RNA sequence: GGGAACGACUCGAGUAGAGUCGAAAAUAAGAAUUCGUUCUUAAAAGAUCCUAAGUCAGCAGCAACAGCCCACAGGAGAGCAUCGAUCUAUCGGAAACGAUAGGGAGCUCUCCGUGGGACAUGCUGCUGAUAUGGAGCAUAACCAGUUCGCUGGUAAACAGUUUCCAUAAUUCGUUAUGGAAACUGUAAAAGAAACAACAACAACAAC
Reactivity to DMS in 0.01 (KOAc 150mM, MgCl2 10mM, bicine 150mM(pH8.5), 24C), signal-to-noise 2, nucleotides 027 to 156: u010a030a000g020a050a110u000u010c280g000u010u000c000u000u010a020a070a100a240g010a160u000c020c000u000a080a300g000u000c020a020g020c020a010g000c000a070a080c080a220g000c000c000c000a000c000a150g110g000a040g040a010g040c000a190u010c210g000a060u000c000u000a010u000c000g000g010a280a140a260c010g020a010u000a010g010g000g000a050g010c000u010c000u000c000c020g060u000g010g060g020a000c030a070u000g020c000u000g000c000u000g000a010u000a130u000g010g000a070g030c010a240u000a120a050c000c020a170g010u010u000c260g080c020u000g020g010u000a090a130
Reactivity to 2A3 in 0.01 (KOAc 150mM, MgCl2 10mM, bicine 150mM(pH8.5), 24C), signal-to-noise 4, nucleotides 027 to 156: u120a030a020g040a030a060u100u110c130g030u040u010c040u030u050a130a110a040a090g060a100u020c010c010u030a100a030g040u020c000a010g000c010a000g010c010a000a070c010a210g040c010c010c010a010c050a110g010g000a000g000a000g000c010a180u260c040g090a050u030c010u010a000u000c000g070g000a130a060a060c000g000a000u000a000g020g010g000a000g010c000u000c000u000c000c000g010u000g000g000g000a010c000a010u010g000c000u000g000c000u000g000a000u000a000u020g000g000a020g050c050a050u090a210a050c000c000a010g010u070u090c220g060c130u020g010g030u070a080a100